[RMDB]
Source: RMDB library OK2TRN, as collected in RNAgym. Structure probing data (2A3 and DMS) for a 177-nucleotide construct. For 2A3, 2,400 sequencing reads were counted. The reactions ran in a buffer of 150 mM KOAc, 10 mM MgCl2 and 150 mM bicine (pH 8.5), at 24 C.
RNA sequence: GGGAACGACUCGAGUAGAGUCGAAAAUAGGCAUGCACCACCUGACACCAAAGGGAUUUAUGAUAUUGACUCAAUCCCUGAGCAGAGUGGGUUGUAUAGAUACCACAUGGGAGGAAUUGAGGGGUGGCGGCCUACAUAAUUUCGAUUAUGUAGGCCGAAAAGAAACAACAACAACAAC
Reactivity to 2A3 in 0.01 (KOAc 150mM, MgCl2 10mM, bicine 150mM(pH8.5), 24C), signal-to-noise 2, nucleotides 027 to 126: u070a010g000g080c040a000u070g020c050a010c020c000a010c010c000u020g020a080c020a050c100c080a110a150a000g050g020g000a010u040u070u090a190u190g090a060u020a140u210u300g080a070c030u000c060a000a020u000c000c000c000u020g010a040g040c000a000g110a030g070u020g000g020g000u010u030g000u000a060u020a020g070a050u120a160c010c020a050c030a090u090g000g000g040a100g020g050a110a110u110u100g000a090g070g000g020g000u010g040g030
Reactivity to DMS in 0.01 (KOAc 150mM, MgCl2 10mM, bicine 150mM(pH8.5), 24C), signal-to-noise 5, nucleotides 027 to 126: u000a070g030g010c090a060u010g020c070a160c000c000a030c000c010u010g010a160c090a170c170c150a070a120a040g000g010g000a020u010u010u010a100u010g010a070u020a300u010u000g000a140c170u000c050a010a030u000c000c000c000u000g000a120g010c030a030g000a080g050u000g010g000g010u000u000g020u000a080u000a100g010a120u000a080c010c020a060c080a120u000g000g010g010a130g000g010a080a090u010u000g010a100g000g000g010g010u000g000g010